[RMDB]
RNA sequence: GGGAACGACUCGAGUAGAGUCGAAAAGCUAAAGUGCUAUCUGGCAUGCUCAAUCGGGUGAUGAGAUUGCGUGGCAUUGAUGUCACCGUUGCCGACUUCUUAUCAGCGAUGGUGCGUUACAGCAUUACCGCCUAAUGGGAUUCGUCCCAUUAGGCGGAAAAGAAACAACAACAACAAC
Reactivity to DMS in 0.01 (KOAc 150mM, MgCl2 10mM, bicine 150mM(pH8.5), 24C), signal-to-noise 2, nucleotides 027 to 126: g000c020u010a080a120a080g040u000g020c030u000a060u020c060u000g000g000c080a030u000g000c030u000c030a040a080u000c000g020g010g040u000g010a050u000g000a020g000a110u000u000g030c100g060u000g010g000c000a070u000u010g020a080u000g030u010c050a020c050c030g010u000u010g010c010c020g000a050c100u000u020c150u000u020a110u000c020a050g000c040g000a000u010g000g010u000g000c040g000u000u010a140c130a020g000c050a070u020u000a200
Reactivity to 2A3 in 0.01 (KOAc 150mM, MgCl2 10mM, bicine 150mM(pH8.5), 24C), signal-to-noise 3, nucleotides 027 to 126: g020c030u120a100a090a050g100u050g080c010u010a050u060c050u070g110g030c020a030u110g030c030u020c070a100a130u060c040g100g050g210u120g040a030u030g000a020g000a060u020u110g040c100g040u030g010g000c040a020u000u130g080a090u080g210u190c020a000c020c040g030u030u030g030c020c020g040a060c040u100u030c010u110u190a050u060c000a000g000c000g010a010u010g010g000u010g010c000g020u010u050a050c040a000g000c020a050u040u130a060